[RMDB]
RNA sequence: GGGAACGACUCGAGUAGAGUCGAAAAGAUAUGGACAUAUCCAACGGGAGCGUUCCGUUUCGGAAACGAAAUGACGCGACGAUCGUUGGAGUAUGUCCUAAGUCAAACGGAUGCUUCGGCAUCCGAACUUCCUUGACAACUUCGGUUGUCAAGGAAGAAAAGAAACAACAACAACAAC
Reactivity to DMS in 0.01 (KOAc 150mM, MgCl2 10mM, bicine 150mM(pH8.5), 24C), signal-to-noise 1, nucleotides 027 to 126: g000a040u000a300u020g000g040a000c000a050u000a090u000c040c000a000a000c020g000g000g000a070g030c000g010u000u000c220c080g020u000u000u000c000g000g000a150a100a270c010g010a000a010a000u000g010a040c010g020c030g020a080c180g000a030u040c000g000u000u010g000g000a040g020u000a000u000g020u000c000c000u000a000a100g000u010c040a090a100a290c000g040g000a040u000g010c000u000u000c200g050g020c010a000u000c000c010g000a030a040
Reactivity to 2A3 in 0.01 (KOAc 150mM, MgCl2 10mM, bicine 150mM(pH8.5), 24C), signal-to-noise 1, nucleotides 027 to 126: g100a020u100a050u140g000g010a000c000a000u020a020u000c000c000a020a000c000g020g020g020a030g010c010g000u140u140c280c000g000u010u080u020c000g020g050a080a140a090c030g020a000a010a010u090g020a000c000g110c020g150a300c030g000a060u040c010g010u000u000g000g020a010g000u020a010u000g000u000c010c000u010a070a000g080u040c030a230a000a060c040g000g030a020u010g000c000u090u000c260g140g050c000a000u000c010c000g000a010a000
Chemical mapping of a 177-nucleotide RNA with DMS and 2A3.
The data come from the RNA Mapping Database (RMDB), library TTRDES.
The reactions ran in a buffer of 150 mM KOAc, 10 mM MgCl2 and 150 mM bicine (pH 8.5), at 24 C.
Reactivities are given for positions 27 through 126.